Notes
The record gives the reactivity of an RNA of 177 nucleotides to DMS and 2A3. For 2A3 the reverse transcriptase was SuperScript II with manganese. The data come from the RNA Mapping Database (RMDB), library OK1LIB. The DMS profile rests on 3,733 reads.
[RMDB]
RNA sequence: GGGAACGACUCGAGUAGAGUCGAAAAGCUAACGCACAGAUGGUGGUGCGUAAAGGCGGCGAAGUCCUUACCCGUACUCGCGCAACCGCCGCUCGUCGGGAAAAUGGCCUGUGGAUUGUCGAAGCGGCAUGGACGAGGGUUUCGACCCUCGUCCAUGAAAAGAAACAACAACAACAAC
Reactivity to DMS in 0.01 (KOAc 150mM, MgCl2 10mM, bicine 150mM(pH8.5), 24C), signal-to-noise 2, nucleotides 027 to 126: g000c050u000a050a070c030g000c010a000c000a050g000a090u050g000g060u060g000g000u000g000c010g000u000a040a050a100g020g000c010g000g000c050g020a090a120g000u020c060c040u010u020a150c140c020c010g000u010a060c050u000c160g020c010g000c110a100a120c140c090g000c000c010g000c010u000c040g000u000c020g020g010g010a020a030a110a120u020g000g030c030c070u010g050u010g010g010a140u010u030g000u000c000g000a070a070g000c060g020g000
Reactivity to 2A3 in 0.01 (KOAc 150mM, MgCl2 10mM, bicine 150mM(pH8.5), 24C), signal-to-noise 3, nucleotides 027 to 126: g060c050u060a050a030c020g060c010a030c010a030g110a130u170g050g180u140g010g000u000g030c010g020u010a110a010a030g060g000c000g010g030c010g030a060a050g040u080c010c000u070u090a040c020c000c000g020u020a040c010u010c000g020c000g000c030a080a050c040c040g020c020c000g000c020u020c070g070u020c000g000g000g140a080a060a040a070u140g020g030c000c040u070g020u030g060g050a180u100u060g070u040c050g040a110a000g000c000g030g000